The data come from the RNA Mapping Database (RMDB), library OK2TST.
The record gives the reactivity of an RNA of 177 nucleotides to DMS and 2A3.
Values cover nucleotides 27 to 126.
RNA sequence: GGGAACGACUCGAGUAGAGUCGAAAAAAACGAGGUUGAUGGAACAGAAUUUGGGUAUCGCACAUGAAUUCUCUGCACGUUUGAUGGACACACAACUAUUACUAAUUUCUCAGCCCUCAGUGUCCGCAUAUGAUUCUUAGUUCGCUAAGAAUCAUAUAAAAGAAACAACAACAACAAC
Reactivity to DMS in 0.01 (KOAc 150mM, MgCl2 10mM, bicine 150mM(pH8.5), 24C), signal-to-noise 9, nucleotides 027 to 126: a040a030a070c090g000a090g010g010u000u000g010a070u000g010g000a090a070c120a050g010a050a060u000u000u000g010g010g020u000a070u010c150g010c110a060c060a060u000g000a050a060u000u000c020u000c060u000g020c070a070c110g000u010u010u010g010a090u010g000g010a030c030a020c030a190c110a030a050c110u000a070u010u010a080c110u010a050a090u000u000u000c040u000c030a120g000c040c010c010u000c070a060g020u000g000u000c000c030g020c250
Reactivity to 2A3 in 0.01 (KOAc 150mM, MgCl2 10mM, bicine 150mM(pH8.5), 24C), signal-to-noise 5, nucleotides 027 to 126: a000a000a000c060g000a040g020g010u070u060g020a080u070g040g030a060a040c030a070g060a090a090u090u060u050g060g010g010u070a070u150c090g020c050a040c020a070u060g050a060a050u130u020c050u010c020u080g050c070a030c110g030u020u060u070g100a120u090g020g010a000c010a010c010a000c000a090a030c050u060a060u210u070a070c050u080a090a180u030u110u020c050u020c030a040g010c010c000c000u020c020a010g010u010g010u030c000c020g010c010

The reactions ran in a buffer of 150 mM KOAc, 10 mM MgCl2 and 150 mM bicine (pH 8.5), at 24 C.
2A3 adducts were read by reverse transcription with SuperScript II with manganese.
The 2A3 profile rests on 5,893 reads.